[RMDB]
RNA sequence: GGGAACGACUCGAGUAGAGUCGAAAAGAUAGAGCUUAUCAAUCAUGUCAGCAAUACCAAUAUAUUGCAUAUCGCCAUAAUUAUAAAAACCAUCAAUGACUGUGGCUGGAUUUAUUGCAGUCCAUGAAAUAAUACUGAUGUUCGCAUCAGUAUUAUUAAAAGAAACAACAACAACAAC
Reactivity to 2A3 in 0.01 (KOAc 150mM, MgCl2 10mM, bicine 150mM(pH8.5), 24C), signal-to-noise 8, nucleotides 027 to 126: g030a010u120a020g090a030g060c050u110u070a040u130c040a060a030u070c020a040u070g060u070c030a010g000c010a020a030u030a090c030c030a090a010u110a010u010a030u160u070g020c030a030u050a040u170c040g010c020c000a040u050a130a050u140u080a070u070a130a160a040a020a030c030c020a040u110c040a050a120u090g040a040c040u040g020u030g060g010c020u030g040g030a070u050u160u150a120u130u140g040c020a000g020u000c030c010a040u090g050a050
Reactivity to DMS in 0.01 (KOAc 150mM, MgCl2 10mM, bicine 150mM(pH8.5), 24C), signal-to-noise 8, nucleotides 027 to 126: g020a070u000a060g020a170g020c110u000u010a030u000c090a080a080u000c050a030u000g010u000c070a110g010c010a030a040u010a050c110c070a070a070u010a190u000a030u000u000g010c030a130u000a080u000c110g000c060c010a020u000a030a030u000u000a060u010a040a050a040a120a120c080c060a050u000c060a080a080u000g010a040c080u010g020u000g000g010c030u000g010g010a090u000u010u010a060u020u000g010c040a030g000u000c070c050a050u000g000a070
The record gives the reactivity of an RNA of 177 nucleotides to 2A3 and DMS. High 2A3 reactivity points to a flexible backbone, as in loops and unpaired stretches. The reactions ran in a buffer of 150 mM KOAc, 10 mM MgCl2 and 150 mM bicine (pH 8.5), at 24 C.